[RMDB]
RNA sequence: GGGAACGACUCGAGUAGAGUCGAAAACGUACACGGAUGAUGCUAAGAAUCCCAUACACUUGAGUGAGCCUCAUGUAGACAUCACGUCGGUUACUUUUCUAAAGCGAGCAUUUAAGAGGGUGGAUAACCCAUCUGUCAUUUUCGAAUGACAGAUGGGAAAAGAAACAACAACAACAAC
Reactivity to 2A3 in 0.01 (KOAc 150mM, MgCl2 10mM, bicine 150mM(pH8.5), 24C), signal-to-noise 3, nucleotides 027 to 126: c030g020u050a020c040a020c080g020g010a040u070g010a020u050g030c040u070a120a010g030a100a110u020c020c000c010a030u100a060c060a000c040u030u110g030a010g040u080g030a030g120c010c010u030c030a010u030g020u040a040g060a070c020a060u020c020a010c100g090u030c020g030g020u030u050a070c010u050u090u080u000c060u150a090a000a030g040c010g020a020g030c040a040u050u060u070a070a040g030a020g030g000g030u020g000g000a080u140a110a060
Reactivity to DMS in 0.01 (KOAc 150mM, MgCl2 10mM, bicine 150mM(pH8.5), 24C), signal-to-noise 4, nucleotides 027 to 126: c120g000u000a050c110a080c070g040g030a050u000g000a040u000g020c040u000a080a100g020a110a110u010c010c010c010a190u010a080c080a060c080u000u000g010a040g020u000g010a100g010c090c010u000c040a030u000g000u010a060g010a080c060a070u000c060a050c100g000u000c040g000g000u000u010a050c040u000u000u010u000c060u000a040a040a070g010c090g010a050g020c040a050u000u010u000a050a090g020a070g000g000g020u010g010g000a130u000a080a160

Chemical mapping of a 177-nucleotide RNA with 2A3 and DMS. For DMS, 3,872 sequencing reads were counted. Source: RMDB library OK2TST, as collected in RNAgym.